[RMDB]
RNA sequence: GGGAACGACUCGAGUAGAGUCGAAAAGAUAUGGACCUAUGAUGAAGCCUCAGGCACGAUGAAACAGAUUACCUCGGAAACGAGGUAAUCUGUGGAGUGCCUGAAGGCGUAAAGUAGGUCCUAAGUCCAUCAUAUGUAAGUUCGCUUACAUAUGAUGAAAAGAAACAACAACAACAAC
Reactivity to DMS in 0.01 (KOAc 150mM, MgCl2 10mM, bicine 150mM(pH8.5), 24C), signal-to-noise 9, nucleotides 027 to 126: g010a090u010a300u010g010g010a010c000c000u010a010u010g000a090u020g020a300a300g000c000c000u000c000a010g000g000c000a010c000g000a130u010g000a190a170a010c010a000g000a020u000u000a000c000c010u000c000g010g000a110a100a190c000g010a010g010g000u000a000a000u000c000u000g010u000g010g000a040g020u000g010c010c000u000g010a020a020g010g020c000g060u000a010a210a300g000u000a000g000g000u000c000c000u000a010a100g010u010c030
Reactivity to 2A3 in 0.01 (KOAc 150mM, MgCl2 10mM, bicine 150mM(pH8.5), 24C), signal-to-noise 3, nucleotides 027 to 126: g060a030u080a060u180g000g010a000c010c000u000a010u020g020a060u300g010a020a010g000c010c000u020c000a000g010g010c000a000c010g290a300u140g030a050a060a010c010a000g010a000u010u000a000c010c000u000c020g010g050a090a110a040c020g000a000g000g000u000a000a000u000c000u000g000u000g000g010a010g000u010g050c000c000u000g000a000a010g000g000c000g000u000a000a000a000g000u000a000g010g000u010c000c000u000a000a000g000u000c010